[RMDB]
RNA sequence: GGGAACGACUCGAGUAGAGUCGAAAAGAUAUGGACGUGCAUCACGACAACAGCGACGUUCGGAAACGAACGUCGACAUGUCGGAUGUCACGUCCUAAGUCAAAACGAUCGUACUUCGGUACGAUCGGUCCUUGUCGGAGUUCGCUCCGACAAGGACAAAAGAAACAACAACAACAAC
Reactivity to DMS in 0.01 (KOAc 150mM, MgCl2 10mM, bicine 150mM(pH8.5), 24C), signal-to-noise 3, nucleotides 027 to 126: g000a010u020a300u020g000g020a010c010g040u000g000c000a000u000c000a220c000g020a010c000a020a120c300a250g000c000g000a020c000g000u000u000c000g010g000a090a100a300c000g020a010a000c000g000u000c000g000a030c120a150u010g000u000c010g000g000a000u000g000u010c010a000c010g010u000c000c000u010a030a090g010u000c020a090a090a160a300c030g000a000u000c000g020u000a010c030u000u050c190g050g000u000a010c000g010a000u000c000g000
Reactivity to 2A3 in 0.01 (KOAc 150mM, MgCl2 10mM, bicine 150mM(pH8.5), 24C), signal-to-noise 3, nucleotides 027 to 126: g030a030u100a070u180g000g010a000c010g000u000g000c010a010u000c030a030c300g010a010c010a200a030c060a160g090c010g010a000c030g000u010u000c010g010g020a080a100a020c030g000a000a000c000g000u000c000g020a020c010a010u040g010u000c010g010g000a000u020g020u160c000a000c010g000u020c000c000u010a000a000g000u000c010a010a020a050a150c020g000a000u000c010g000u000a010c010u040u080c300g170g000u000a010c000g000a010u000c000g010